[RMDB]
RNA sequence: GGGAACGACUCGAGUAGAGUCGAAAAGCACUUCGCGGGCAGUGCUGCGGCCUCGUGUGGGAUCGCGUCAGGACUGAAGGAGAGCGAAUCCCGGGGCUCGGUGUGGAGAAGGAGGUGCCAAGUAGCCAGCAUUAAGUUGUUUCGACAACUUAAUGCUAAAAGAAACAACAACAACAAC
Reactivity to 2A3 in 0.01 (KOAc 150mM, MgCl2 10mM, bicine 150mM(pH8.5), 24C), signal-to-noise 9, nucleotides 027 to 126: g000c010a010c020u030u030c070g020c040g220g040g020c040a050g030u030g050c020u010g020c070g030g000c020c000u030c030g110u170g050u220g080g020g000a020u030c010g000c030g150u050c050a090g080g150a140c070u160g110a100a050g100g050a070g020a010g020c010g000a040a080u020c000c000c000g000g010g000g000c020u010c010g020g010u040g020u080g040g060a140g020a080a050g040g010a010g000g000u040g000c010c000a070a040g030u060a010g100c020c020
Reactivity to DMS in 0.01 (KOAc 150mM, MgCl2 10mM, bicine 150mM(pH8.5), 24C), signal-to-noise 4, nucleotides 027 to 126: g000c010a040c030u010u010c030g020c050g000g020g010c220a080g010u020g010c020u000g010c140g010g010c030c010u000c040g030u020g020u040g000g010g010a040u000c010g010c030g010u020c050a080g020g020a170c120u020g020a110a140g010g010a100g010a140g000c010g000a060a060u010c010c010c000g000g000g000g030c010u000c030g000g000u000g020u020g010g000a110g000a200a090g000g000a090g000g000u010g010c010c060a080a110g030u020a110g020c070c070